[RMDB]
An RNA of 177 nucleotides, treated with 2A3 and read out base by base. The RNA was probed in 150 mM KOAc, 10 mM MgCl2 and 150 mM bicine (pH 8.5) at 24 C. Reactivities are given for positions 27 through 126. For 2A3 the reverse transcriptase was SuperScript II with manganese.
RNA sequence: GGGAACGACUCGAGUAGAGUCGAAAAUUCAUGUGUCUUGCGACCUGCACCGCUGCCUUCAAAGCUGCCACCGCAGAAGGCGGUUCCUACGACGAGUACGUGGAGCCGAAUCUCAGUAGCUUUUCAGGUAUAGCCCGCGUUUCGACGCGGGCUAUACAAAAGAAACAACAACAACAAC
Reactivity to 2A3 in 0.01 (KOAc 150mM, MgCl2 10mM, bicine 150mM(pH8.5), 24C), signal-to-noise 1, nucleotides 027 to 126: u170u080c080a040u210g050u050g030u080c020u050u050g000c040g020a040c000c000u000g000c000a010c040c010g000c000u000g000c000c000u000u040c120a020a020a020g000c010u120g010c020c040a160c040c000g000c110a030g000a050a000g110g000c000g010g000u000u020c000c000u070a010c010g070a000c040g040a020g070u170a010c040g000u010g000g010a000g000c010c000g010a010a100u020c000u000c000a040g000u080a000g000c060u160u050u030u070c040a080g010